[RMDB]
RNA sequence: GGGAACGACUCGAGUAGAGUCGAAAAGACUCAUGGGAAGUCGGCGUGACUCUCGACUAAUGUGGAUGUCCGCUUUCUGGCUCCAGGCAAACAGUGUUGGUGCGGAGGUUGGUUAGUGGCGCGCCAACAUAGUCGGGAAAUUCGUUUCCCGACUAUGAAAAGAAACAACAACAACAAC
Reactivity to 2A3 in 0.01 (KOAc 150mM, MgCl2 10mM, bicine 150mM(pH8.5), 24C), signal-to-noise 4, nucleotides 027 to 126: g010a000c010u010c020a060u060g040g010g030a080a010g010u040c010g010g010c030g010u070g030a030c010u000c000u000c020g050a020c020u100a090a090u070g030u070g020g020a030u060g040u010c000c010g000c000u030u060u020c030u020g020g000c000u010c010c020a010g030g020c010a020a080a050c040a080g020u000g020u050u030g000g010u010g000c010g010g020a060g000g040u080u040g000g020u010u080a050g010u020g020g000c000g000c000g000c000c000a010a010
Reactivity to DMS in 0.01 (KOAc 150mM, MgCl2 10mM, bicine 150mM(pH8.5), 24C), signal-to-noise 9, nucleotides 027 to 126: g000a090c010u000c020a110u030g000g000g000a110a040g010u000c030g010g010c040g010u020g000a060c040u000c040u000c040g020a120c140u030a090a090u000g010u020g000g010a060u020g000u020c010c020g020c070u000u010u010c070u010g010g000c020u020c010c020a080g000g010c050a090a090a100c170a100g000u020g010u000u000g000g010u000g000c020g000g010a080g000g010u010u010g000g000u010u020a070g020u020g000g010c020g010c020g000c000c010a020a040